[RMDB]
RNA sequence: GGGAACGACUCGAGUAGAGUCGAAAAACGGUCGUGCGCGACCGAGGCGCGGCUAGGUCGACGGACCGAACAAUGGCAUCCCGCAUUCUGCCAUCCGCCGCGCAGCUUCUUCUCAAACGGUGCGGAAAAAAGUAGGACACCUUCGGGUGUCCUACAAGUAUCUUGAAAUGUUCGCAUUUCAAGAUACAAAAGAAACAACAACAACAAC
Reactivity to DMS in 0.01 (KOAc 150mM, MgCl2 10mM, bicine 150mM(pH8.5), 24C), signal-to-noise 1, nucleotides 027 to 156: a120c030g010g010u000c010g030u000g000c170g060c040g030a000c010c030g030a030g000g010c040g000c050g000g000c060u000a120g020g000u000c010g010a120c300g000g000a070c000c000g020a130a070c280a110a050u000g010g010c020a070u000c040c010c020g030c000a090u000u010c020u000g020c020c010a070u000c030c060g020c000c000g000c010g040c010a000g030c030u000u000c070u010u000c050u010c020a140a020a090c080g020g020u010g020c000g010g000a000a020a040a080a130a120g020u000a020g000g010a040c000a020c000c010u000u010c300g070g010g050u000g020u000c000c000u010a000c010a000a100
Reactivity to 2A3 in 0.01 (KOAc 150mM, MgCl2 10mM, bicine 150mM(pH8.5), 24C), signal-to-noise 2, nucleotides 027 to 156: a000c010g010g000u010c010g010u050g050c230g000c020g090a000c000c010g000a040g000g010c010g000c000g010g020c010u010a000g010g010u010c030g060a220c190g160g050a000c010c000g000a000a000c010a000a010u000g000g000c000a020u110c040c020c010g000c010a030u300u110c020u040g010c000c000a010u020c020c020g000c000c000g000c010g000c000a000g010c000u130u100c000u080u010c030u020c010a070a070a060c050g000g010u020g000c010g000g000a030a040a000a000a030a010g000u000a000g000g000a000c000a000c000c010u040u080c140g020g000g000u000g000u010c000c000u000a000c000a000a000

Source information: Conditions: 150 mM KOAc, 10 mM MgCl2 and 150 mM bicine (pH 8.5), 24 C. Structure probing data (DMS and 2A3) for a 207-nucleotide construct. 2A3 adducts were read by reverse transcription with SuperScript II with manganese. For DMS the reverse transcriptase was MarathonRT.